[RMDB]
RNA sequence: GGGAACGACUCGAGUAGAGUCGAAAAGAAUUGGUAUGUAAGCUACAACUUCCGGUAGCUGCGUCACACUUUAAGAGUGUGCAUACUGAGCCGAAGCUCAGCUUCGGUCCCCCAAGGGAAGGACAAACCAUAUGGUAGCUUUCGAGCUACCAUAUGGAAAAGAAACAACAACAACAAC
Reactivity to DMS in 0.01 (KOAc 150mM, MgCl2 10mM, bicine 150mM(pH8.5), 24C), signal-to-noise 5, nucleotides 027 to 126: g020a090a090u000u000g000g000u000a000u010g000u000a300a120g020c000u000a010c010a020a080c030u000u000c000c010g000g010u000a010g000c000u000g000c010g000u000c000a000c010a000c000u000u020u050a150a090g020a010g050u000g010u000g000c010a000u010a020c010u000g000a020g000c000c000g000a020a000g020c010u050c220a120g000c000u000u000c000g000g010u010c050c030c000c180c140a150a090g000g000g020a000a030g010g010a180c280a080a100a170
Reactivity to 2A3 in 0.01 (KOAc 150mM, MgCl2 10mM, bicine 150mM(pH8.5), 24C), signal-to-noise 8, nucleotides 027 to 126: g110a010a100u030u010g010g000u000a000u010g010u000a010a010g000c000u000a000c000a140a070c020u000u000c000c000g030g000u000a000g000c000u000g010c000g000u000c000a000c000a000c010u050u150u300a300a130g210a010g240u000g000u000g000c000a000u000a010c000u010g010a000g000c000c000g000a000a000g010c030u100c300a040g010c000u030u000c000g000g000u010c000c000c000c010c010a040a040g060g000g000a000a010g020g000a010c070a040a080a000

The record gives the reactivity of an RNA of 177 nucleotides to DMS and 2A3. Source: RMDB library OK1LIB, as collected in RNAgym. The reactions ran in a buffer of 150 mM KOAc, 10 mM MgCl2 and 150 mM bicine (pH 8.5), at 24 C. DMS adducts were read by reverse transcription with MarathonRT.